[RMDB]
RNA sequence: GGGAACGACUCGAGUAGAGUCGAAAAGAUUUAAACAGAUGUAGAUACACAAAUGUUUGAAUCCCAGUAACAAAAAUCCUGGUAUCUCGGGUAUACAGUAGUGCAGAUACUGUAUUUUUAAUGCUCCUUAGGUUUUCCAUCUUCGGAUGGAAAACAACGUAGUUAGACCGUUCGCGGUCUAACUACGAAAAGAAACAACAACAACAAC
Reactivity to 2A3 in 0.01 (KOAc 150mM, MgCl2 10mM, bicine 150mM(pH8.5), 24C), signal-to-noise 2, nucleotides 027 to 156: g000a020u000u000u040a000a000a010c000a010g020a020u020g010u000a000g000a040u090a020c040a010c010a000a130a030u000g010u010u020u030g000a030a060u020c000c050c000a080g200u210a130a120c080a170a110a000a000a070u040c000c000u000g000g020u000a010u010c020u010c000g030g000g010u000a000u010a010c010a010g030u040a010g040u050g300c080a010g070a260u020a040c000u000g010u000a010u010u030u010u040u120a200a220u060g030c020u080c080c030u080u100a070g010g140u010u000u000u000c010c000a010u000c000u020u030c170g090g010a010u000g040g000a010a010a000a000c000a000a000